Conditions: 150 mM KOAc, 10 mM MgCl2 and 150 mM bicine (pH 8.5), 24 C. Structure probing data (2A3 and DMS) for a 177-nucleotide construct. 2A3 adducts were read by reverse transcription with SuperScript II with manganese. Values cover nucleotides 27 to 126.
RNA sequence: GGGAACGACUCGAGUAGAGUCGAAAAACGUAUGGAUAGGCUUGAAAAGAAGGGUAAUAAAUUCUAUGUUGAGCUUGACUGGACACGAUUUGAUGGUACGAUACCACCUACUCUUUUGAUGCAUAUCGUUAAACGACGCAUUCGUGCGUCGUUUAACAAAAGAAACAACAACAACAAC
Reactivity to 2A3 in 0.01 (KOAc 150mM, MgCl2 10mM, bicine 150mM(pH8.5), 24C), signal-to-noise 1, nucleotides 027 to 126: a010c060g040u080a090u130g090g010a000u060a050g010g020c030u000u030g040a070a000a000a070g010a000a020g090g060g050u050a050a060u060a180a110a010u120u040c060u060a090u130g140u010u000g100a030g000c000u130u040g070a170c030u020g000g050a000c010a030c110g050a050u010u010u090g060a100u010g000g050u010a060c060g030a030u090a100c010c020a000c000c020u040a120c000u030c030u000u110u000u050g030a010u050g020c030a050u010a030u210c020
Reactivity to DMS in 0.01 (KOAc 150mM, MgCl2 10mM, bicine 150mM(pH8.5), 24C), signal-to-noise 1, nucleotides 027 to 126: a140c090g030u000a040u000g020g010a050u000a040g000g020c020u000u000g000a060a010a150a030g010a020a040g000g010g010u000a060a140u030a080a040a090u000u000c040u000a040u000g000u000u000g000a060g000c030u000u000g000a090c050u000g000g000a070c070a060c270g000a060u000u010u000g000a090u000g000g020u010a140c180g030a160u000a070c030c030a000c080c010u000a050c090u010c020u000u000u000u020g000a040u000g000c100a060u010a040u030c050